[RMDB]
RNA sequence: GGGAACGACUCGAGUAGAGUCGAAAAGAUAUGGAACCGUACGCUUUUGACGCUCUGUCGGAAACGACAAGGAGCGAUAAGCGUGACGGUUCCUAAGUCAAAAGGUUUCAAGUUCGCUUGAAACCAACUGGUUAAUUUAGUUCGCUAAAUUAACCAGAAAAGAAACAACAACAACAAC
Reactivity to DMS in 0.01 (KOAc 150mM, MgCl2 10mM, bicine 150mM(pH8.5), 24C), signal-to-noise 5, nucleotides 027 to 126: g000a040u000a300u010g000g010a000a000c000c000g020u000a020c010g010c000u000u000u000u000g010a180c060g010c010u010c000u000g000u000c000g010g000a100a070a190c000g010a020c010a070a110g020g000a010g010c000g000a080u000a000a010g000c000g000u000g000a010c010g000g000u000u000c000c000u000a010a090g010u010c040a070a100a130a110g000g000u000u000u000c000a010a010g010u000u010c260g020c000u000u000g000a020a000a010c000c010a020a040
Reactivity to 2A3 in 0.01 (KOAc 150mM, MgCl2 10mM, bicine 150mM(pH8.5), 24C), signal-to-noise 4, nucleotides 027 to 126: g020a000u040a030u130g000g000a000a000c010c000g010u020a000c000g030c020u030u190u160u300g250a060c010g000c000u030c010u020g010u000c010g010g010a070a040a030c010g010a010c050a120a180g260g010a020g030c010g020a030u030a070a000g000c000g000u000g090a010c000g000g000u000u000c000c000u000a000a000g000u000c010a030a010a050a160g020g000u020u000u000c010a010a010g000u030u090c210g120c150u000u010g010a000a000a000c010c000a000a010
Source: RMDB library TTRDEL, as collected in RNAgym. The record gives the reactivity of an RNA of 177 nucleotides to DMS and 2A3. For DMS, 7,210 sequencing reads were counted. Values cover nucleotides 27 to 126. For 2A3, 11,462 sequencing reads were counted. DMS adducts were read by reverse transcription with MarathonRT. DMS (dimethyl sulfate) methylates the pairing face of unpaired adenines and cytosines.